Chemical mapping of a 207-nucleotide RNA with 2A3 and DMS. It was measured as part of the RMDB library OK3TST. Conditions: 150 mM KOAc, 10 mM MgCl2 and 150 mM bicine (pH 8.5), 24 C. For DMS the reverse transcriptase was MarathonRT. For 2A3 the reverse transcriptase was SuperScript II with manganese.
[RMDB]
RNA sequence: GGGAACGACUCGAGUAGAGUCGAAAACGGAUUGAUUAUUAAUUGAUAAUGGACGUAAUCCAUUAUAUCCACCGCUCUGAUCACCGGCUGCAGUGAGCAUAAAAUAGGUGUCAUUACCAGCAUUACGAAUAAAGAACCCAUAAUUACCAUUUAUUGCACCAUAGAGUAUUUUCGAAUACUCUAUGGUAAAAGAAACAACAACAACAAC
Reactivity to 2A3 in 0.01 (KOAc 150mM, MgCl2 10mM, bicine 150mM(pH8.5), 24C), signal-to-noise 6, nucleotides 027 to 156: c020g010g030a050u070u080g040a020u030u200a040u060u170a200a110u130u130g040a020u020a030a020u010g000g020a010c080g120u090a060a050u000c000c010a000u020u040a040u010a030u020c020c020a020c020c050g020c020u000c040u070g080a060u050c020a010c050c020g030g010c010u040g000c010a040g010u010g090a030g000c030a030u140a060a120a040a030u130a050g000g030u020g030u040c010a020u020u070a050c060c000a010g020c000a030u050u090a030c030g030a040a030u120a100a110a060g060a040a020c030c010c030a030u110a110a040u140u100a050c010c010a020u100u150u130a120u200u280g030c030
Reactivity to DMS in 0.01 (KOAc 150mM, MgCl2 10mM, bicine 150mM(pH8.5), 24C), signal-to-noise 3, nucleotides 027 to 156: c070g010g010a070u010u000g010a170u000u010a160u000u000a070a140u000u010g010a070u000a000a010u000g030g020a050c060g020u000a020a300u000c010c000a060u000u000a040u000a140u010c040c030a100c050c070g030c060u010c050u000g000a080u000c020a060c030c030g000g010c030u020g020c000a040g020u000g000a090g000c040a100u000a020a070a060a130u010a070g030g020u010g010u010c030a090u000u000a120c020c040a100g010c040a060u000u020a080c030g010a040a090u010a050a080a150g010a090a060c010c030c000a040u000a060a120u000u000a060c070c030a100u000u000u000a040u000u010g000c170

2A3 is a SHAPE reagent: it acylates the 2'-hydroxyl of flexible nucleotides of all four kinds.